[RMDB]
RNA sequence: GGGAACGACUCGAGUAGAGUCGAAAAUACCAUAGUUGACAUUCCACAGAGUUUGACUUUUUCAUAUGAUGGGUUACGUGGCGCAAUACGUAAAGCUAAAGAUUAUGGUUUUACUGUUUUUGUGUGCAGAGCGCCUCGUUCGCGAGGCGCAAAAGAAACAACAACAACAAC
Reactivity to DMS in 0.01 (KOAc 150mM, MgCl2 10mM, bicine 150mM(pH8.5), 24C), signal-to-noise 2, nucleotides 027 to 129: u070a130c000c020a090u030a120g030u080u000g000a140c120a000u030u000c050c040a070c080a110g010a150g040u030u050u010g020a000c080u000u000u000u280u000c040a080u010a050u060g020a080u000g000g000g090u000u050a040c180g000u000g030g000c040g000c040a000a140u010a010c210g010u000a010a000a050g030c000u020a000a170a150g060a230u050u020a050u040g030g000u090u000u000u000a000c110u070g030u030u000u000u000u000g030u030g080u200g040c100a080g000a130
Reactivity to 2A3 in 0.01 (KOAc 150mM, MgCl2 10mM, bicine 150mM(pH8.5), 24C), signal-to-noise 1, nucleotides 027 to 129: u100a000c000c000a010u100a000g000u000u010g180a030c120a070u040u000c000c000a000c150a280g130a030g000u020u010u000g120a160c000u090u100u000u220u180c060a110u280a100u210g080a020u010g010g000g060u000u020a030c240g000u000g160g000c000g000c060a000a000u000a000c000g020u000a020a020a020g070c000u000a060a160a000g090a170u190u080a130u140g000g000u000u000u040u000a090c020u040g130u010u190u000u030u020g100u000g000u010g140c000a000g000a080